[RMDB]
RNA sequence: GGGAACGACUCGAGUAGAGUCGAAAAGGGUUUUGCGAUCUUUAAGCAGAUCGCAGGUUCACCCCGUACGGUGCGGAAGUUCGCGCUUCCGUGAAACGCGAAAAUCGGACGGUGGCUGCAAGUCGCAUUGAAGGGAUCGCCUUCGGGCGAUCCCUAACCUUUAUACUAACUUCGGUUAGUAUAAAGGAAAAGAAACAACAACAACAAC
Reactivity to 2A3 in 0.01 (KOAc 150mM, MgCl2 10mM, bicine 150mM(pH8.5), 24C), signal-to-noise 1, nucleotides 027 to 156: g040g000g000u030u060u210u040g000c000g000a000u000c010u010u120u180a160a060g080c050a020g000a000u010c000g000c020a000g010g000u090u080c090a050c030c000c000c000g040u110a060c110g020g010u000g000c000g000g030a050a000g030u040u190c040g010c030g000c080u000u000c020c000g000u000g080a100a060a000c070g010c030g060a070a040a060a130u110c020g000g010a000c030g040g070u040g010g070c040u110g010c060a040a030g070u060c030g020c060a050u060u140g070a090a030g050g020g000a000u000c000g000c030c080u020u070c160g140g000g000c000g030a000u000c020c000c000u010a000a000

This 207-nucleotide RNA was probed chemically with 2A3. It was measured as part of the RMDB library M2RFPK. The reactions ran in a buffer of 150 mM KOAc, 10 mM MgCl2 and 150 mM bicine (pH 8.5), at 24 C. Values cover nucleotides 27 to 156.